About this RNA:
This 177-nucleotide RNA was probed chemically with 2A3 and DMS. The reactions ran in a buffer of 150 mM KOAc, 10 mM MgCl2 and 150 mM bicine (pH 8.5), at 24 C. High DMS reactivity at an A or C suggests that its Watson-Crick edge is free. It was measured as part of the RMDB library TTRINS.
[RMDB]
RNA sequence: GGGAACGACUCGAGUAGAGUCGAAAAGAUAUGGAGGUCUGGAGCGACGAAGAUAAGUGCAUUUUAUUGUUGUUCGGAAACGAACAACAAUAAUUCAUCUUAUCAGAGCUCCUGACCUCCUAAGUCACCAUCUAACAACGUUCGCGUUGUUAGAUGGAAAAGAAACAACAACAACAAC
Reactivity to 2A3 in 0.01 (KOAc 150mM, MgCl2 10mM, bicine 150mM(pH8.5), 24C), signal-to-noise 2, nucleotides 027 to 126: g010a010u070a010u140g000g000a000g000g000u040c000u050g000g030a000g000c080g300a300c110g050a230a050g000a030u010a000a010g000u000g110c200a160u150u220u060u110a000u020u000g010u010u010g000u030u000c000g020g020a050a070a060c010g000a000a010c000a030a000c000a010a000u000a000a000u060u040c010a160u120c020u020u010a000u030c030a030g020a000g040c000u000c030c000u000g010a000c000c000u000c000c010u000a000a000g020u010c010a020
Reactivity to DMS in 0.01 (KOAc 150mM, MgCl2 10mM, bicine 150mM(pH8.5), 24C), signal-to-noise 2, nucleotides 027 to 126: g020a030u000a300u020g000g010a010g020g020u010c000u020g010g010a020g020c000g000a190c240g020a090a100g010a010u000a000a020g000u010g020c300a090u000u010u000u010a000u010u000g000u000u000g010u000u010c000g000g000a080a090a260c000g010a010a010c000a000a000c000a000a000u000a020a010u010u000c030a040u000c010u000u010a010u010c000a040g020a260g000c000u000c000c000u000g000a000c040c000u000c000c000u010a000a100g000u000c020a290